[RMDB]
RNA sequence: GGGAACGACUCGAGUAGAGUCGAAAAUGUCUGACGCGGCAAAGGCAAAUCAGAAGGAGCUGCAGAAGGGGCAAGCUCUGAAGGAACGACCACCCUUGCAGAACCGCAACAAUAGGACCAUGACACCCACUCAUACAGUCUUCGGACUGUAUGAGUGAAAAGAAACAACAACAACAAC
Reactivity to DMS in 0.01 (KOAc 150mM, MgCl2 10mM, bicine 150mM(pH8.5), 24C), signal-to-noise 3, nucleotides 027 to 126: u010g000u000c000u010g000a040c120g000c060g000g000c040a050a080a110g020g000c020a040a080a120u030c080a080g040a300a220g010g010a060g010c010u010g010c030a070g010a150a110g030g010g000g000c040a080a080g010c020u000c010u000g010a090a150g010g000a030a050c080g010a040c130c050a160c140c020c020u000u000g010c030a050g000a120a120c020c010g010c070a060a100c130a080a120u020a100g000g000a050c090c120a060u010g000a070c170a180c110c080
Reactivity to 2A3 in 0.01 (KOAc 150mM, MgCl2 10mM, bicine 150mM(pH8.5), 24C), signal-to-noise 2, nucleotides 027 to 126: u060g020u000c000u020g010a020c040g030c030g050g030c080a090a020a040g030g000c030a010a050a110u100c010a020g020a080a070g060g030a000g040c010u040g000c070a040g130a190a050g140g070g020g000c040a080a030g000c000u010c010u060g050a070a030g070g020a110a050c090g040a030c070c010a020c040c020c000u000u020g000c040a010g030a110a070c020c000g020c020a050a030c040a090a100u140a150g000g040a010c000c030a050u090g000a010c030a050c090c000
Chemical mapping of a 177-nucleotide RNA with DMS and 2A3. The reactions ran in a buffer of 150 mM KOAc, 10 mM MgCl2 and 150 mM bicine (pH 8.5), at 24 C. It was measured as part of the RMDB library OK2TRN.